[RMDB]
RNA sequence: GGGAACGACUCGAGUAGAGUCGAAAAGCGUACUACUUCCGUCACCAGACGCUUGGAUUUAUAUGCUAGCUAUCCCAAAUAGGAUAGCUGCAUAUUGUCAGCGUCUGCAAGUCGGAAGUAUCGCAAAGCAGAUAGGACGUUCGCGUCCUAUCUGCAAGUUCAGAGCUAGGUUCGCCUAGCUCUGAACAAAAGAAACAACAACAACAAC
Reactivity to 2A3 in 0.01 (KOAc 150mM, MgCl2 10mM, bicine 150mM(pH8.5), 24C), signal-to-noise 4, nucleotides 027 to 156: g010c000g050u110a120c020u000a000c000u060u000c010c000g010u020c010a010c170c000a010g000a020c010g040c020u100u160g130g000a050u050u300u060a010u010a000u000g030c110u200a020g000c000u000a020u020c030c010c020a250a300a200u300a060g000g000a000u000a000g000c000u000g000c000a000u000a000u010u000g000u020c000a000g010c000g010u020c000u000g000c010a030a300g000u010c000g010g040a000a000g000u000a000u030c000g000c010a040a040a040g000c000a000g000a010u000a000g020g000a000c010g080u110u150c300g030c020g120u000c000c000u000a000u010c000u000g000c000a000a000